[RMDB]
An RNA of 177 nucleotides, treated with DMS and 2A3 and read out base by base. The DMS profile rests on 5,318 reads. The reactions ran in a buffer of 150 mM KOAc, 10 mM MgCl2 and 150 mM bicine (pH 8.5), at 24 C. Source: RMDB library OK1LIB, as collected in RNAgym.
RNA sequence: GGGAACGACUCGAGUAGAGUCGAAAAUAGAAGACAUCCGCACUCGGCAGGCCCAGCCAUUAACAAGAGUGCAAUGGAAAUCAAUAUUGCGCGGCACUCCUCCCAGUAGGAAGCUUCUGGCGGCAGCCUGCGAUAGAGUUUUCGAACUCUAUCGCAGAAAAGAAACAACAACAACAAC
Reactivity to DMS in 0.01 (KOAc 150mM, MgCl2 10mM, bicine 150mM(pH8.5), 24C), signal-to-noise 3, nucleotides 027 to 126: u030a120g010a080a080g000a100c090a050u000c030c080g000c020a030c000u000c020g010g000c020a060g000g000c010c010c060a130g000c000c020a160u000u060a060a090c160a110a110g000a050g000u000g000c000a120a030u010g000g000a070a100a080u040c130a060a090u030a060u030u010g000c010g000c060g000g000c090a110c050u020c020c030u010c050c020c070a080g010u030a060g010g000a040a130g000c040u000u000c020u000g020g000c050g000g010c060a050g020c110
Reactivity to 2A3 in 0.01 (KOAc 150mM, MgCl2 10mM, bicine 150mM(pH8.5), 24C), signal-to-noise 5, nucleotides 027 to 126: u140a000g190a130a010g060a040c030a060u050c050c040g000c000a010c010u020c010g030g000c020a010g040g050c000c020c000a000g000c020c000a030u150u200a180a060c090a130a050g030a000g020u010g010c000a000a020u070g020g050a000a040a090u110c060a080a070u100a070u220u140g030c090g000c000g030g000c020a010c070u010c010c010u030c000c060c000a020g030u070a030g020g060a060a020g030c010u070u030c000u080g080g020c010g030g000c020a010g050c010